Structure probing data (2A3) for a 177-nucleotide construct.
Values cover nucleotides 27 to 126.
[RMDB]
RNA sequence: GGGAACGACUCGAGUAGAGUCGAAAAAAUGAGCUCAACAAACAGGUAACUUUACGUAAACUGUUCUUUUUAUCUUUCAGCUCGCCAUUUUCUGAUGCAGUACAUAGAACUGUGAUACGUCAUUAUAGGAUCGUACCGGUUUCGACCGGUACGAUCCAAAAGAAACAACAACAACAAC
Reactivity to 2A3 in 0.01 (KOAc 150mM, MgCl2 10mM, bicine 150mM(pH8.5), 24C), signal-to-noise 1, nucleotides 027 to 126: a000a050u300g000a300g000c000u070c150a000a190c000a150a130a000c000a000g000g010u050a070a000c050u070u000u180a130c040g000u040a010a010a010c000u000g090u090u030c070u060u050u000u000u020a020u250c060u000u040u000c050a000g040c000u040c150g010c000c070a200u140u140u300u170c050u040g180a140u260g000c000a040g200u100a050c070a060u090a090g200a290a000c070u020g000u000g040a000u000a180c090g150u060c090a000u000u300a110u300a050

Conditions: 150 mM KOAc, 10 mM MgCl2 and 150 mM bicine (pH 8.5), 24 C.